[RMDB]
RNA sequence: GGGAACGACUCGAGUAGAGUCGAAAAACUGAGUACUUGCCCUUUGACCCAUUAGAUUUUACAGGGAUAUUAGCAGUGAAAGAUGAAUUGUAUGCUCAUCAGCAUGCCCUAAAUGGUAGAAAAUGUCUAUUUGUUAGAUAGAGAUGAGGGAGAGAAACCAUGUUUAGUUCUUCGGAACUAAACAUGGAAAAGAAACAACAACAACAAC
Reactivity to DMS in 0.01 (KOAc 150mM, MgCl2 10mM, bicine 150mM(pH8.5), 24C), signal-to-noise 3, nucleotides 027 to 156: a070c070u000g010a170g020u000a090c030u000u000g020c010c000c000u010u020u010g010a170c040c020c030a170u000u000a140g020a180u000u010u000u000a110c090a070g010g010g020a090u000a040u000u000a050g000c030a120g000u020g000a070a080a120g000a120u010g000a060a090u000u010g030u000a070u000g020c050u000c040a080u000c040a100g000c050a120u010g020c010c030c010u010a070a040a060u010g010g020u000a090g010a100a060a090a100u000g000u000c000u010a040u000u010u000g010u000u000a000g000a050u000a070g000a120g000a090u010g020a050g020g020g000a080g010a150g000a110a080a170
Reactivity to 2A3 in 0.01 (KOAc 150mM, MgCl2 10mM, bicine 150mM(pH8.5), 24C), signal-to-noise 3, nucleotides 027 to 156: a000c050u070g010a020g050u070a070c060u030u050g050c010c020c000u040u010u060g070a070c040c010c000a050u050u080a070g080a190u100u190u060u100a080c090a040g000g000g000a030u050a070u100u080a040g000c030a000g010u050g140a080a080a070g040a040u090g020a020a120u100u070g030u170a050u130g020c000u000c030a100u010c000a050g000c020a030u050g010c000c000c000u040a080a070a010u040g010g030u040a030g100a050a110a050a030u080g030u000c010u020a060u050u060u090g090u050u050a070g000a060u000a010g040a010g000a030u070g010a020g000g010g000a020g000a000g000a030a010a000